[RMDB]
RNA sequence: GGGAACGACUCGAGUAGAGUCGAAAAAGCAGAGAAUCUAGGAAGGUUUUUAUUAUCGUCCGAGGACAUAGAGGGACUGAAGUUCAUGCUAUUGAAUAUUGGUUUUAGGAUAAUUGACGAUAGCAUAUAGCCGUGAUAAUUUCGAUUAUCACGGCUAAAAAGAAACAACAACAACAAC
Reactivity to DMS in 0.01 (KOAc 150mM, MgCl2 10mM, bicine 150mM(pH8.5), 24C), signal-to-noise 2, nucleotides 027 to 126: a080g000c110a100g010a180g000a090a090u000c030u010a150g000g000a050a060g010g030u000u000u000u010u020a020u030u010a030u000c060g000u000c030c000g000a140g000g010a110c100a060u000a030g020a090g050g000g030a060c070u000g000a080a110g010u020u000c180a040u020g000c020u000a000u000u000g000a020a160u000a030u000u020g030g000u000u010u010u010a170g000g020a080u000a040a020u000u000g000a300c030g010a000u000a010g010c010a010u000a200